[RMDB]
RNA sequence: GGGAACGACUCGAGUAGAGUCGAAAAUGGAAUGGUUCGCCAUUCCAAAAAAGCGUACUACUGGCUUCGAGCCGUUGAAACUACCCACCCUUCCCAAAUAGGAAGGAGGUGGAGGCUCGGAGCCAGUAUCGCAAAAAACUGCGAUUCGUCGCAGUAACUACAUGUUAUGGUUCGCCAUAACAUGUAGAAAAGAAACAACAACAACAAC
Reactivity to 2A3 in 0.01 (KOAc 150mM, MgCl2 10mM, bicine 150mM(pH8.5), 24C), signal-to-noise 2, nucleotides 027 to 156: u090g000g010a000a010u000g020g000u050u050c110g020c010c050a030u020u040c010c060a000a000a000a000a000a080g040c050g030u130a100c030u000a000c000u000g000g010c000u000u000c010g000a000g000c000c010g020u020u110g110a190a050a050c070u130a090c000c000c000a120c020c020c030u030u080c000c000c080a180a280a090u240a040g020g000a010a020g030g000a030g030g010u010g010g010a050g000g000c010u010c000g010g010a000g010c000c000a000g000u000a000u000c000g000c000a000a000a000a000a000a000c020u030g020c010g040a040u050u060c230g030u020c000g230c000a020g000u000a010a010
Reactivity to DMS in 0.01 (KOAc 150mM, MgCl2 10mM, bicine 150mM(pH8.5), 24C), signal-to-noise 3, nucleotides 027 to 156: u000g010g000a020a020u000g020g030u000u000c300g040c010c000a010u000u000c000c000a010a000a070a080a090a100g000c040g010u000a090c170u010a020c020u000g020g000c000u000u020c010g000a030g030c000c010g030u000u000g010a190a120a170c060u000a110c050c010c010a170c170c000c000u010u000c000c000c020a080a150a250u010a070g000g000a020a020g020g010a020g010g000u000g010g000a220g010g040c010u000c010g010g000a000g010c010c000a010g010u000a000u000c040g000c010a000a050a080a080a080a050c020u000g000c000g010a080u000u000c270g010u000c000g000c010a010g010u000a010a100